[RMDB]
RNA sequence: GGGAACGACUCGAGUAGAGUCGAAAAUUUGCAGUCGUAUCUGGAAGCGAACACGCCGAAAGCGACGCUGGCUGGUCAGGUGAACUACUGGAGCAACUAUCCGAAGUUCUUCGUUAGCCUGAUGAAAUAAUCACGGACCUUUCGAGGUCCGUGAUUAAAAAGAAACAACAACAACAAC
Reactivity to DMS in 0.01 (KOAc 150mM, MgCl2 10mM, bicine 150mM(pH8.5), 24C), signal-to-noise 1, nucleotides 027 to 126: u000u010u000g040c000a010g040u000c010g050u000a050u000c060u050g040g020a280a100g020c000g000a150a250c240a180c220g040c000c020g000a280a090a100g010c020g000a080c000g080c010u010g040g040c050u000g020g000u000c050a010g000g000u040g000a100a020c060u040a210c150u010g000g000a000g000c050a010a070c060u000a150u000c130c170g010a050a120g000u000u000c010u000u000c060g000u000u000a300g000c010c000u000g000a020u000g010a000a060a100
Structure probing data (DMS) for a 177-nucleotide construct. Source: RMDB library OK2TST, as collected in RNAgym.